Conditions: 150 mM KOAc, 10 mM MgCl2 and 150 mM bicine (pH 8.5), 24 C. The record gives the reactivity of an RNA of 170 nucleotides to 2A3 and DMS. For 2A3 the reverse transcriptase was SuperScript II with manganese. The DMS profile rests on 3,095 reads.
RNA sequence: GGGAACGACUCGAGUAGAGUCGAAAAGUCAGUGCACUUAUGGGUGCUAAUGGCAACAAGAUUGUUGACAAAGAAGUUAAAGACAUGCAGUUUGAUUUGUAUGUCAAUGUUUACAGGAGCACUAGCCAGGCCCUCGCGUUCGCGCGAGGGAAAAGAAACAACAACAACAAC
Reactivity to 2A3 in 0.01 (KOAc 150mM, MgCl2 10mM, bicine 150mM(pH8.5), 24C), signal-to-noise 2, nucleotides 027 to 129: g040u020c000a000g090u000g000c050a000c000u030u180a100u290g030g020g000u010g000c020u050a080a070u020g000g000c010a000a010c010a070a030g080a070u000u140g060u060u060g040a000c040a110a140a030g030a050a000g010u110u150a120a000a040g050a000c050a000u040g000c000a020g000u060u250u210g200a210u140u130u000g020u010a000u000g000u000c020a030a030u080g000u020u010u020a020c020a000g000g100a000g020c010a030c020u040a060g000c000c020a000g110g040
Reactivity to DMS in 0.01 (KOAc 150mM, MgCl2 10mM, bicine 150mM(pH8.5), 24C), signal-to-noise 2, nucleotides 027 to 129: g070u050c070a100g030u040g060c060a020c010u000u070a150u080g060g000g070u030g020c000u040a040a190u040g000g040c010a070a050c100a220a070g030a110u010u030g050u010u150g050a060c100a040a120a160g000a070a140g020u000u040a060a080a170g020a050c000a030u060g010c060a030g010u030u120u000g100a070u020u000u000g050u010a060u010g000u040c080a000a100u090g020u000u000u000a040c040a130g000g000a030g020c030a000c030u060a040g090c090c040a080g070g040